An RNA of 207 nucleotides, treated with 2A3 and read out base by base.
High 2A3 reactivity points to a flexible backbone, as in loops and unpaired stretches.
The reactions ran in a buffer of 150 mM KOAc, 10 mM MgCl2 and 150 mM bicine (pH 8.5), at 24 C.
RNA sequence: GGGAACGACUCGAGUAGAGUCGAAAACUCCACGCUGGGUAAUGGACGACGGCGGCGUGUGGCGAACAGGGAUACCGGUAGUCAGUGUCUGGAACAUCCCAAGGGGCGGCGGAGCUAGCAGCCCGACAAAACGGGCACAAGUUCGCUUGUGCCCGAAGGAAAAUCAUAACUUCGGUUAUGAUUUUCCAAAAGAAACAACAACAACAAC
Reactivity to 2A3 in 0.01 (KOAc 150mM, MgCl2 10mM, bicine 150mM(pH8.5), 24C), signal-to-noise 2, nucleotides 027 to 156: c010u040c010c000a060c020g040c050u070g000g020g070u180a170a170u130g030g040a120c010g020a020c000g020g040c010g020g010c050g000u100g030u050g040g040c040g040a130a010c070a070g040g000g000a010u030a090c000c020g020g030u060a050g130u060c050a010g040u020g020u050c020u040g000g010a010a100c000a040u020c010c000c020a110a100g000g000g000g000c030g030g010c050g000g060a060g050c020u020a010g000c000a010g010c000c000c000g010a020c050a010a090a040a010c020g000g010g000c000a000c000a020a010g040u070u100c150g030c150u020u000g000u000g000c000c030c000g000a000a000